[RMDB]
The data come from the RNA Mapping Database (RMDB), library RFM100. This 177-nucleotide RNA was probed chemically with 2A3. Conditions: 150 mM KOAc, 10 mM MgCl2 and 150 mM bicine (pH 8.5), 24 C.
RNA sequence: GGGAACGACUCGAGUAGAGUCGAAAAGCCCACCAUACAGAUUUCCAUACGGUAGAAGAAAGUAUCACCUAUCUCAACUCCAGGAUUGGACCAGUACUAGGCUCAUCAUAGUUAAGCCACAAUCCACAUGGAGGACCUCUUUCGAGAGGUCCUCCAUAAAAGAAACAACAACAACAAC
Reactivity to 2A3 in 0.01 (KOAc 150mM, MgCl2 10mM, bicine 150mM(pH8.5), 24C), signal-to-noise 1, nucleotides 027 to 126: g030c070c030c000a000c090c000a040u070a200c000a020g170a150u000u030u010c000c000a100u040a030c080g130g000u130a010g090a100a000g050a000a120a000g030u020a090u080c000a050c000c000u000a000u110c000u000c010a000a260c000u000c070c010a000g000g000a050u000u000g020g000a000c000c000a040g140u090a050c000u000a040g070g020c000u000c070a190u030c040a010u040a030g150u100u080a110a000g000c000c000a000c000a020a030u060c000c000a010c000